Source information: The record gives the reactivity of an RNA of 177 nucleotides to DMS and 2A3. For DMS, 1,535 sequencing reads were counted. Values cover nucleotides 27 to 126. The RNA was probed in 150 mM KOAc, 10 mM MgCl2 and 150 mM bicine (pH 8.5) at 24 C. The data come from the RNA Mapping Database (RMDB), library RFM100. For DMS the reverse transcriptase was MarathonRT.
[RMDB]
RNA sequence: GGGAACGACUCGAGUAGAGUCGAAAAGCUUUUUGCAUGGCUGAGAGUGUAGUUGUAUCAGUUUCAUGGUAAGUUAGACGAGCUUCCAUUAAAACUACAAAAGACUUCCAGAAGCAGGGUGGGAUAAAGUCCUACUCCUGUUCGCAGGAGUAGGACUAAAAGAAACAACAACAACAAC
Reactivity to DMS in 0.01 (KOAc 150mM, MgCl2 10mM, bicine 150mM(pH8.5), 24C), signal-to-noise 1, nucleotides 027 to 126: g000c080u000u000u000u000u000g000c000a000u000g000g000c010u030g010a090g010a120g030u000g000u000a010g000u040u000g000u000a080u030c050a040g000u000u000u110c050a030u000g000g000u060a020a030g010u000u040a050g000a130c260g020a060g000c000u000u000c020c000a260u020u040a070a020a060a000c100u010a030c030a090a100a140a040g000a040c140u010u020c010c060a040g000a060a090g000c120a010g000g010g000u020g020g000g000a050u070a040a160
Reactivity to 2A3 in 0.01 (KOAc 150mM, MgCl2 10mM, bicine 150mM(pH8.5), 24C), signal-to-noise 1, nucleotides 027 to 126: g000c000u000u050u060u100u170g020c000a010u090g020g000c050u050g030a020g000a050g050u120g000u020a110g000u010u020g010u000a050u000c010a010g010u000u080u140c040a010u000g010g000u200a010a030g000u050u120a080g050a160c080g020a050g000c000u000u000c010c000a010u010u020a070a050a010a020c020u040a000c000a000a120a000a000g050a020c040u080u000c000c100a010g000a030a000g090c000a000g000g060g070u000g030g010g000a010u100a070a220